[RMDB]
RNA sequence: GGGAACGACUCGAGUAGAGUCGAAAAUGGUGGUCAUUAAGGAUGGUUCAGAGGCGGACGGUGCAAUGGCGAAUAUGCUGCGGGUGAGGGUGACCGAUGCGUUCGGUAAUGCGCUUACCGGACAGACACCUUAGUAGGGUUUCGACCCUACUAAGGUAAAAGAAACAACAACAACAAC
Reactivity to 2A3 in 0.01 (KOAc 150mM, MgCl2 10mM, bicine 150mM(pH8.5), 24C), signal-to-noise 4, nucleotides 027 to 126: u120g030g000u030g010g030u030c040a060u090u150a090a060g140g010a080u120g050g000u070u140c060a040g020a050g110g000c040g030g020a050c020g000g030u060g060c040a080a100u090g030g000c020g040a040a050u140a100u210g050c030u030g040c040g010g020g000u080g020a080g010g050g040u030g040a030c020c010g020a020u100g040c060g010u010u000c010g000g040u020a050a040u150g040c230g020c100u000u020a000c000c000g020g010a010c010a010g020a010c090
Reactivity to DMS in 0.01 (KOAc 150mM, MgCl2 10mM, bicine 150mM(pH8.5), 24C), signal-to-noise 5, nucleotides 027 to 126: u010g010g020u000g010g000u000c050a090u000u000a110a090g010g000a080u010g000g000u000u010c090a110g010a110g010g010c080g000g000a080c100g000g010u000g020c080a050a090u010g000g010c040g000a080a080u000a090u010g010c050u000g000c080g010g000g020u000g010a110g000g010g000u010g020a130c040c030g000a090u010g020c150g010u000u000c010g000g010u000a000a030u010g010c220g010c140u000u000a020c000c010g000g000a030c020a110g010a120c210